[RMDB]
RNA sequence: GGGAACGACUCGAGUAGAGUCGAAAAGGGGUCUACGACAUGUUCCGACAGGAGCAUCGAUCUACCUGAAGCCUCCACGGGUAGGGAGCUCCUGCCGGAACAACAGCGUAGACGGAGGCACCCAAAAGAUUAAAACGGCUUCGGCCGUUUUAAUCAACACUAUCUAAAUGUUCGCAUUUAGAUAGUGAAAAGAAACAACAACAACAAC
Reactivity to 2A3 in 0.01 (KOAc 150mM, MgCl2 10mM, bicine 150mM(pH8.5), 24C), signal-to-noise 4, nucleotides 027 to 156: g030g010g050g040u000c000u010a010c010g080a060c120a250u300g000u010u000c000c000g000a010c000a010g000g000a000g000c000a040u300c020g000a010u000c000u000a000c000c000u020g030a110a010g010c000c000u000c000c000a000c000g010g010g000u000a000g000g000g010a000g000c000u000c010c000u000g000c000c030g000g000a000a000c000a030a000c000a010g010c000g010u010a000g000a000c000g000g000a010g000g000c010a040c000c000c010a020a130a020a070g000a000u000u010a010a000a010a000c010g000g000c020u070u120c260g130g000c010c000g000u010u000u000u000a000a000u000c010a000a000
Reactivity to DMS in 0.01 (KOAc 150mM, MgCl2 10mM, bicine 150mM(pH8.5), 24C), signal-to-noise 2, nucleotides 027 to 156: g000g000g040g020u000c000u000a000c000g020a030c050a170u000g000u000u010c010c000g010a040c110a030g030g000a000g040c000a190u010c150g000a050u000c010u010a010c000c000u010g010a040a150g020c000c010u000c000c040a220c030g020g010g000u000a010g000g000g000a020g000c000u000c000c000u000g000c000c000g000g000a010a020c010a030a050c140a110g010c000g040u010a030g010a030c010g010g020a040g100g060c030a180c020c030c020a080a130a170a200g000a060u000u000a000a000a030a030c010g000g040c010u000u000c300g060g000c000c000g000u000u000u000u000a020a010u000c020a090a260
Overview
Conditions: 150 mM KOAc, 10 mM MgCl2 and 150 mM bicine (pH 8.5), 24 C. This 207-nucleotide RNA was probed chemically with 2A3 and DMS. Reactivities are given for positions 27 through 156.